Record summary:
Source: RMDB library RFM100, as collected in RNAgym. Structure probing data (2A3 and DMS) for a 177-nucleotide construct. DMS adducts were read by reverse transcription with MarathonRT. In probing experiments dimethyl sulfate is read out at A N1 and C N3, which are open when not base-paired. For 2A3 the reverse transcriptase was SuperScript II with manganese. Values cover nucleotides 27 to 126. The reactions ran in a buffer of 150 mM KOAc, 10 mM MgCl2 and 150 mM bicine (pH 8.5), at 24 C.

[RMDB]
RNA sequence: GGGAACGACUCGAGUAGAGUCGAAAACAAUUGUGCAGUUCUAGCAGCGAGCGGCAGUACCACUGGAGGGAAGCAAUUCAGCACAGUAAGCCGCCCGUGCAGAGGCGAAGCGGAAGACCCAGCUGUUCAUAUGCUAGCCGUUCGCGGCUAGCAUAUGAAAAGAAACAACAACAACAAC
Reactivity to 2A3 in 0.01 (KOAc 150mM, MgCl2 10mM, bicine 150mM(pH8.5), 24C), signal-to-noise 2, nucleotides 027 to 126: c030a040a110u150u110g160u130g070c010a000g000u030u050c010u080a010g000c070a020g010c000g030a040g000c000g030g020c040a070g070u080a090c040c030a000c020u010g060g040a090g000g050g060a040a000g030c030a030a020u000u110c000a010g030c030a040c000a090g000u000a090a090g000c000c000g000c050c000c000g090u080g000c060a020g020a020g050g030c040g060a100a000g030c070g050g010a080a020g060a060c040c000c000a020g040c030u040g010u100u020
Reactivity to DMS in 0.01 (KOAc 150mM, MgCl2 10mM, bicine 150mM(pH8.5), 24C), signal-to-noise 1, nucleotides 027 to 126: c060a070a040u050u060g000u000g080c000a090g010u060u000c000u000a030g030c020a080g010c000g020a050g000c020g020g010c000a070g000u030a060c110c220a030c000u000g060g000a140g030g010g080a110a000g000c270a160a050u000u000c100a100g020c060a150c000a140g000u000a040a070g000c050c000g000c000c000c000g070u000g000c050a020g030a040g050g090c040g020a110a000g030c020g000g000a090a000g000a080c010c030c000a030g000c120u030g000u000u000